[RMDB]
An RNA of 177 nucleotides, treated with DMS and 2A3 and read out base by base. The DMS profile rests on 15,389 reads. It was measured as part of the RMDB library TTRDES.

RNA sequence: GGGAACGACUCGAGUAGAGUCGAAAAGAUAUGGAACAAUCGAUUCUUUCCGAUGAAAUCUCUUCGGAAACGAAGAGAUGGAGGAAGAUCGAGUUGUUCCUAAGUCAAAGACUUUCUUCGGAAAGUCGUAUAUACCAUACUUCGGUAUGGUAUAUACAAAAGAAACAACAACAACAAC
Reactivity to DMS in 0.01 (KOAc 150mM, MgCl2 10mM, bicine 150mM(pH8.5), 24C), signal-to-noise 8, nucleotides 027 to 126: g000a060u000a300u010g000g000a020a020c020a030a070u000c010g010a030u010u010c050u000u010u000c000c000g010a130u020g000a120a120a020u000c010u000c000u000u000c000g010g000a090a070a220c010g010a010a010g000a020g000a000u000g000g010a050g010g010a040a030g010a050u000c000g010a040g010u000u000g010u000u000c000c000u000a020a100g010u000c090a140a110a210g000a010c000u000u000u000c000u000u010c230g030g000a010a010a010g010u000c010
Reactivity to 2A3 in 0.01 (KOAc 150mM, MgCl2 10mM, bicine 150mM(pH8.5), 24C), signal-to-noise 9, nucleotides 027 to 126: g020a020u140a050u260g030g020a030a020c010a030a030u020c010g030a040u270u260c060u210u220u070c050c020g300a300u050g000a030a020a010u010c000u000c000u000u010c000g030g020a120a060a060c010g000a000a000g000a000g000a000u000g000g000a010g020g000a010a020g010a030u010c010g010a010g070u020u010g000u000u000c000c000u000a070a010g050u020c070a210a060a140g000a000c000u000u030u020c020u060u090c300g120g010a010a010a000g000u000c000